An RNA of 207 nucleotides, treated with 2A3 and DMS and read out base by base. For DMS the reverse transcriptase was MarathonRT. It was measured as part of the RMDB library OK3TST.
RNA sequence: GGGAACGACUCGAGUAGAGUCGAAAAAUGAGUCUUUUACUUAAUUACAACCUAACAUUUUGAGCAGAGCGAGUAACUCACAGUAGGUGCUUAAUGGAUAUGUGUUGCAUGAAAAUAUAAUCCCAUUCAUUUCUCUUUCUGUUUUGUAUACAGUGCAAGUACUGAGGUGAUUCGUCACCUCAGUACUAAAAGAAACAACAACAACAAC
Reactivity to 2A3 in 0.01 (KOAc 150mM, MgCl2 10mM, bicine 150mM(pH8.5), 24C), signal-to-noise 4, nucleotides 027 to 156: a020u110g010a020g030u080c110u100u150u080u130a100c030u070u130a100a160u150u110a060c030a060a040c000c010u110a090a060c040a110u120u140u050u180g030a010g000c070a030g020a040g090c050g020a030g080u070a070a070c030u030c050a070c020a020g090u100a030g060g050u020g030c010u020u090a020a020u070g020g000a060u070a040u160g060u010g020u020u030g030c040a040u120g120a090a100a050a010u210a030u090a040a110u020c000c020c000a010u030u040c040a030u020u190u020c050u020c000u020u210u020c020u030g020u060u040u160u120g070u080a070u070a120c030a000g030u080g140c050a050
Reactivity to DMS in 0.01 (KOAc 150mM, MgCl2 10mM, bicine 150mM(pH8.5), 24C), signal-to-noise 1, nucleotides 027 to 156: a070u000g010a080g020u000c090u000u010u000u010a060c030u000u000a080a240u020u000a140c020a030a100c030c020u010a100a140c050a100u000u000u000u020g030a050g030c070a170g030a040g030c030g010a300g020u010a080a040c000u000c020a100c030a100g000u000a100g030g050u000g020c020u010u000a070a060u000g010g000a110u000a030u010g020u000g010u000u000g010c060a060u000g010a110a020a060a090u000a050u010a030a150u020c010c000c010a100u000u010c030a060u000u000u000c010u000c040u000u010u010c080u000g000u000u000u000u000g010u000a160u000a020c050a050g020u010g030c030a150